[RMDB]
RNA sequence: GGGAACGACUCGAGUAGAGUCGAAAACGAUCUGUUCGCAGAUCGAGCUACGGAGACGUAGCAAAGCGAGCGAGGGCACGGGCGCUCGCACUACCGGAAGUACAGCCAUAUCCACGUGUGCUAGGAUAUGGCCGUGCCCAAAGAAACAGCACACGAAAUACCCGACGUAUUUCGAUACGUCGGGUAUAAAAGAAACAACAACAACAAC
Reactivity to 2A3 in 0.01 (KOAc 150mM, MgCl2 10mM, bicine 150mM(pH8.5), 24C), signal-to-noise 2, nucleotides 027 to 156: c010g000a000u000c000u000g040u090u120c250g040c060a000g000a000u010c000g000a010g000c000u000a000c000g000g050a080g010a060c000g000u010a000g020c030a010a110a000g000c000g000a000g000c000g000a090g010g000g020c020a000c030g040g080g020c040g060c010u020c000g010c010a010c030u100a100c010c030g050g060a130a050g050u110a060c070a040g000c010c000a010u010a000u010c020c030a060c140g000u000g000u000g000c010u000a010g000g010a000u000a010u000g000g010c010c000g000u000g000c000c000c010a160a150a010g190a040a130a000c070a010g010c000a000c000a000c010g000a120a090

Source: RMDB library OK3TST, as collected in RNAgym. An RNA of 207 nucleotides, treated with 2A3 and read out base by base. Conditions: 150 mM KOAc, 10 mM MgCl2 and 150 mM bicine (pH 8.5), 24 C. Reactivities are given for positions 27 through 156.